[RMDB]
RNA sequence: GGGAACGACUCGAGUAGAGUCGAAAAGCUAAGUUUUUGCCAGGAGCUCCCGCGCUUUUACGCGGACAAUGGAGUGCAUGGAGCUGCAUCGCAUUGUGGCCAAAUGGAGUCCUACAUUGAGCCAGCCAAUACGUAUCCUAUUCGUAGGAUACGUAUUAAAAGAAACAACAACAACAAC
Reactivity to DMS in 0.01 (KOAc 150mM, MgCl2 10mM, bicine 150mM(pH8.5), 24C), signal-to-noise 9, nucleotides 027 to 126: g010c080u020a070a090g010u010u010u010u010u010g010c040c060a100g000g010a100g000c030u000c020c020c110g010c020g010c190u000u020u020u030a100c060g000c030g000g000a080c120a060a070u020g010g000a070g010u010g000c040a050u010g010g010a100g010c060u000g000c030a050u010c210g000c050a060u010u010g010u000g000g010c000c050a070a040a050u010g010g000a140g000u000c020c000u010a110c070a050u000u000g000a190g010c010c010a080g000c070c130
Reactivity to 2A3 in 0.01 (KOAc 150mM, MgCl2 10mM, bicine 150mM(pH8.5), 24C), signal-to-noise 9, nucleotides 027 to 126: g070c070u140a100a140g020u060u030u020u120u120g060c020c020a060g030g040a030g030c010u040c020c010c000g000c000g000c010u020u150u110u240a070c090g010c020g020g010a030c030a020a050u120g030g010a050g040u060g020c020a030u110g090g040a050g020c020u020g000c020a040u060c040g030c120a040u020u090g040u040g040g040c010c010a040a070a080u050g020g010a040g060u010c000c000u030a020c010a050u030u100g010a010g020c010c010a010g040c020c020